[RMDB]
RNA sequence: GGGAACGACUCGAGUAGAGUCGAAAACUGUAGCUGUAGUCAAUGAUAAGAUCUUCACCAAGAGUGGCGUUAAUGACAUUUGUAUGUUUGAGAAUAAAACCACUUUGCCUACUAAUAUAGCUUUUGAACGCCAUGGUGUUCGCACCAUGGAAAAGAAACAACAACAACAAC
Reactivity to 2A3 in 0.01 (KOAc 150mM, MgCl2 10mM, bicine 150mM(pH8.5), 24C), signal-to-noise 9, nucleotides 027 to 129: c020u030g060u110a010g030c020u020g020u040a010g020u030c020a060a050u110g050a060u060a100a060g040a110u020c020u060u050c050a040c070c030a090a040g050a010g050u020g010g000c030g040u060u120a090a050u160g040a020c020a040u080u120u110g200u120a100u040g070u030u060u100g070a080g040a080a060u160a100a060a010a000c020c000a020c000u040u020u030g010c000c000u040a060c010u060a110a100u130a050u040a090g040c010u070u050u030u100g070a070a020c060g000
Reactivity to DMS in 0.01 (KOAc 150mM, MgCl2 10mM, bicine 150mM(pH8.5), 24C), signal-to-noise 9, nucleotides 027 to 129: c030u000g000u010a040g030c030u020g030u020a050g030u010c060a040a030u030g020a090u020a070a100g000a170u020c080u030u020c070a100c110c100a090a100g020a080g050u000g020g030c090g020u020u020a020a040u020g000a050c070a060u000u030u010g030u060a020u030g000u000u000u000g000a110g010a110a080u060a040a040a120a110c020c050a050c050u020u020u030g030c010c010u000a050c080u000a020a060u000a070u010a020g010c060u000u010u020u010g000a070a100c210g000